[RMDB]
RNA sequence: GGGAACGACUCGAGUAGAGUCGAAAAAAAGAAGGUCUUGUAGGGUUCGCUAGGUUGACAGAUAAUUCUCAUUUUUAUGUGUGUGCCCUUGGUCUCUAAAGGGCUAGAUUUGGGUAUCAAUGAAAAGGUUGAGUCCAGACUGUCUUCAUCUUCCUUCGAUGGAGACUAUAUUCGUAUAGUCUCCAUCAAAAGAAACAACAACAACAAC
Reactivity to 2A3 in 0.01 (KOAc 150mM, MgCl2 10mM, bicine 150mM(pH8.5), 24C), signal-to-noise 4, nucleotides 027 to 156: a000a010a010g120a040a020g010g030u040c060u160u100g060u090a060g020g020g010u050u040c020g020c060u020a030g010g080u070u060g030a010c020a020g060a050u110a070a080u200u030c030u010c070a070u050u090u020u080u130a100u080g060u010g030u010g030u050g010c000c000c000u010u020g050g020u050c030u000c020u140a060a080a060g010g000g010c000u010a020g020a080u050u060u070g020g000g010u050a110u180c010a050a040u060g160a090a110a060a030g080g000u040u040g010a010g000u000c030c000a000g020a030c030u010g020u020c000u040u040c030a070u040c020u100u120c010c010u100u100c060
Reactivity to DMS in 0.01 (KOAc 150mM, MgCl2 10mM, bicine 150mM(pH8.5), 24C), signal-to-noise 3, nucleotides 027 to 156: a040a070a110g000a070a060g010g020u000c050u000u000g050u000a100g020g000g010u000u010c050g020c060u000a050g050g020u010u010g010a080c050a060g010a120u010a060a090u000u000c030u020c040a130u000u010u010u010u000a040u020g020u010g030u010g030u000g000c010c000c010u000u000g020g000u000c040u000c080u000a060a050a150g030g000g000c010u000a010g000a080u000u010u000g020g010g020u000a070u000c040a070a100u000g000a060a060a080a090g020g020u000u010g010a080g010u000c030c030a100g000a080c050u010g000u010c020u000u000c030a060u000c060u000u000c000c010u010u000c070